[RMDB]
RNA sequence: GGGAACGACUCGAGUAGAGUCGAAAAAUAAUGGGUUUUAUAGCGAAAUAGACUUUUUUAUCGCGUGUUCAAUAUUUGCGUUAGUUAUUAUUUUUUUGGAAUGUAAAUUCUCUCUAAACACAGGUGACGUUCUUUUAAGUUUCGACUUAAAAGAACGAAAAGAAACAACAACAACAAC
Reactivity to 2A3 in 0.01 (KOAc 150mM, MgCl2 10mM, bicine 150mM(pH8.5), 24C), signal-to-noise 7, nucleotides 027 to 126: a000u040a000a010u050g050g060g100u080u140u160u290a090u060a030g010c010g010a000a020a010u020a000g020a020c010u050u030u020u000u040u100a080u100c020g010c030g090u000g010u000u030c020a040a020u010a030u050u030u100g150c000g000u010u020a040g090u020u040a040u010u000a020u010u020u010u010u000u040u060g040g020a060a020u040g010u200a070a080a120u030u000c010u000c000u000c010u020a010a020a000c010a000c000a030g090g030u050g060a030
Reactivity to DMS in 0.01 (KOAc 150mM, MgCl2 10mM, bicine 150mM(pH8.5), 24C), signal-to-noise 2, nucleotides 027 to 126: a030u010a020a020u000g010g010g030u010u010u020u020a070u000a060g000c010g000a030a030a010u010a020g000a070c080u000u010u010u000u010u010a040u030c030g000c130g000u000g010u010u000c030a030a090u010a010u000u000u010g010c020g010u010u000a020g010u000u000a020u010u000a000u000u000u000u000u000u010u020g000g010a010a010u000g000u030a050a040a020u000u000c000u010c020u000c030u000a020a020a020c030a010c050a050g010g010u010g000a250